[RMDB]
RNA sequence: GGGAACGACUCGAGUAGAGUCGAAAAACAAACCUCUUUAUACCGUCGAUUAUCAGAAGCCGACGUAAGAAGUACGUGGAAGACGAUUCCUUCCGCUAUGUUAGGAUGCUACAGGUUUCCGACAGGAAGUUUCCCCUCUGUUCGCAGAGGGGAAACUAAAAGAAACAACAACAACAAC
Reactivity to 2A3 in 0.01 (KOAc 150mM, MgCl2 10mM, bicine 150mM(pH8.5), 24C), signal-to-noise 3, nucleotides 027 to 126: a000c090a000a100a040c060c020u030c010u030u110u070a210u090a090c040c070g000u000c000g100a140u050u150a090u300c190a080g100a120a000g080c080c010g010a010c030g010u000a080a000g090a050a020g010u020a040c030g080u070g030g040a020a050g050a010c070g130a090u160u190c010c000u000u000c000c000g000c020u020a040u100g010u050u030a090g070g040a080u130g000c050u070a110c120a150g030g010u010u010u000c000c060g010a010c020a020g060g040a020
Reactivity to DMS in 0.01 (KOAc 150mM, MgCl2 10mM, bicine 150mM(pH8.5), 24C), signal-to-noise 1, nucleotides 027 to 126: a010c300a070a020a010c070c070u010c160u000u020u000a190u000a260c300c000g090u000c050g000a210u000u120a000u000c300a070g030a100a150g120c090c000g000a060c000g000u000a070a050g000a020a050g000u010a000c100g040u000g020g020a040a040g010a000c300g000a160u090u000c210c000u000u000c000c040g000c040u000a000u000g000u000u000a180g000g000a240u000g000c120u000a000c140a270g000g020u000u000u000c040c000g060a000c230a100g000g000a070